[RMDB]
RNA sequence: GGGAACGACUCGAGUAGAGUCGAAAAUCUCAAAGCUUCGGCUUUGAGACAGUAAGGGAAACCGAUUAUUGCGGUCGACUCCGGAGAAACAAAGUCAAAUAAGAACGUUAGGCUUCGGCCUAACGAAACUACUCGACUGGUUCGCCAGUCGAGUAGUAAAAGAAACAACAACAACAAC
Reactivity to 2A3 in 0.01 (KOAc 150mM, MgCl2 10mM, bicine 150mM(pH8.5), 24C), signal-to-noise 1, nucleotides 027 to 126: u010c000u000c000a000a000a000g000c010u110u280c300g140g000c020u000u020u040g010a010g020a020c000a010g120u080a030a090g080g040g000a040a020a020c010c040g000a050u140u040a230u150u300g090c000g010g010u040c040g040a030c040u090c070c000g090g030a080g160a070a160a020c050a040a090a020g070u040c010a020a050a030u140a170a010g060a150a050c030g000u000u000a010g000g000c000u020u030c220g040g000c010c030u010a000a000c000g020a030a010
Reactivity to DMS in 0.01 (KOAc 150mM, MgCl2 10mM, bicine 150mM(pH8.5), 24C), signal-to-noise 1, nucleotides 027 to 126: u000c000u000c010a010a000a020g000c010u000u020c180g070g000c000u000u000u000g010a030g000a040c080a110g000u000a060a110g000g020g000a090a110a230c030c000g020a040u040u010a140u000u010g000c000g010g000u000c060g020a170c020u000c000c000g030g010a060g000a120a020a170c150a030a020a020g010u000c060a110a080a190u010a090a100g000a090a100c030g010u020u000a000g010g000c000u000u020c300g010g010c000c000u000a000a010c000g010a030a070
Notes:
Structure probing data (2A3 and DMS) for a 177-nucleotide construct. For 2A3, 884 sequencing reads were counted. It was measured as part of the RMDB library M2PK50.